[RMDB]
RNA sequence: GGGAACGACUCGAGUAGAGUCGAAAACGGGAGUGAUCCAGAUGACGGUCCUGCCAUGAGACCGCAACGAGAGCAUGUCGCAUCGAAUGGACUCGGGGAGUCGGCAGCUUGCCCCACGGAUGAGCGCGUUCCAUUCAUAGUUCGCUAUGAAUGGAACAAAAGAAACAACAACAACAAC
Reactivity to 2A3 in 0.01 (KOAc 150mM, MgCl2 10mM, bicine 150mM(pH8.5), 24C), signal-to-noise 3, nucleotides 027 to 126: c010g050g000g000a030g050u100g030a070u000c010c020a030g070a160u120g040a050c000g030g000u000c000c000u050g120c030c010a110u090g010a000g020a120c000c020g000c040a020a060c050g100a010g000a010g130c050a060u120g050u140c030g000c040a060u050c040g040a070a060u090g050g040a030c010u000c060g000g040g000g000a050g040u040c030g040g000c030a030g020c020u040u070g020c020c010c000c000a040c030g040g000a060u100g030a010g030c070g000c040
Reactivity to DMS in 0.01 (KOAc 150mM, MgCl2 10mM, bicine 150mM(pH8.5), 24C), signal-to-noise 3, nucleotides 027 to 126: c120g000g000g000a070g000u000g010a090u010c030c030a070g010a120u010g010a120c080g000g010u000c020c010u010g010c110c090a070u000g000a120g010a010c020c020g010c060a080a110c090g020a130g010a150g020c040a060u000g010u010c060g030c070a090u010c070g000a080a190u010g000g000a070c070u000c060g020g000g000g010a070g000u000c010g010g000c050a070g020c040u000u000g000c040c010c010c070a090c110g000g010a060u010g020a030g000c090g030c130

Chemical mapping of a 177-nucleotide RNA with 2A3 and DMS. For 2A3 the reverse transcriptase was SuperScript II with manganese. The data come from the RNA Mapping Database (RMDB), library RFMREP. Conditions: 150 mM KOAc, 10 mM MgCl2 and 150 mM bicine (pH 8.5), 24 C. In probing experiments dimethyl sulfate is read out at A N1 and C N3, which are open when not base-paired.